Conditions: 150 mM KOAc, 10 mM MgCl2 and 150 mM bicine (pH 8.5), 24 C. This 177-nucleotide RNA was probed chemically with DMS. DMS adducts were read by reverse transcription with MarathonRT. The DMS profile rests on 1,058 reads.

[RMDB]
RNA sequence: GGGAACGACUCGAGUAGAGUCGAAAAAAUGACCAAAUAACGCUGUAAAGUCAGCUAGCACACGUGAUAUCCAUUGUGGGCAAUUAUUAUCGGGGCUACGUGGAUAGCGAGCGGCCAGAAUAUUAUCAGACGAAUCCAGAUUCGUCUGGAUUCGUCUAAAAGAAACAACAACAACAAC
Reactivity to DMS in 0.01 (KOAc 150mM, MgCl2 10mM, bicine 150mM(pH8.5), 24C), signal-to-noise 2, nucleotides 027 to 126: a050a030u010g000a110c040c040a060a140a120u030a080a100c220g010c040u000g000u000a050a150a110g030u030c000a040g000c010u000a080g020c040a020c140a060c040g010u020g000a170u000a040u000c050c020a030u000u010g020u000g010g030g000c050a080a090u020u000a090u000u020a070u010c100g030g010g000g020c050u000a030c060g020u000g000g000a060u000a080g020c050g020a050g000c010g000g000c040c050a050g020a050a040u000a110u000u000a050u010c150